[RMDB]
RNA sequence: GGGAACGACUCGAGUAGAGUCGAAAAAGACCUCACUACGGUGAGGUCAACAAGUCAAUGUCAAGUGUUGCUUCGGCUGACUUACUACAAAAGUUAAUUGCACUGCACGCACAUGCCAAAAGGUAAAUUGAUCGUCAUAUUUCGAUAUGACGAUCAAAAAAGAAACAACAACAACAAC
Reactivity to 2A3 in 0.01 (KOAc 150mM, MgCl2 10mM, bicine 150mM(pH8.5), 24C), signal-to-noise 3, nucleotides 027 to 126: a000g010a000c010c000u020c000a020c000u030a040c160g050g000u010g000a000g000g000u030c000a010a020c000a000a000g030u020c010a040a070u090g070u060c030a050a050g010u040g050u220u100g020c010u090u100c020g000g040c010u010g010a030c000u010u070a010c030u080a050c060a010a170a010a000g060u050u020a130a060u150u020g030c030a000c020u030g000c010a030c020g000c000a000c030a040u040g030c000c030a070a190a000a010g080g000u110a150a220a150
Reactivity to DMS in 0.01 (KOAc 150mM, MgCl2 10mM, bicine 150mM(pH8.5), 24C), signal-to-noise 3, nucleotides 027 to 126: a130g000a030c000c000u000c000a010c000u000a110c220g070g010u010g010a020g010g000u000c000a020a020c160a060a110g000u030c110a110a090u020g010u000c040a050a040g000u000g010u020u000g010c030u000u000c040g000g000c020u000g010a060c030u010u000a060c130u000a070c170a070a020a080a030g030u020u010a050a070u020u010g010c020a010c040u010g000c050a060c050g020c020a000c060a070u010g030c010c050a060a030a060a110g000g010u000a040a050a120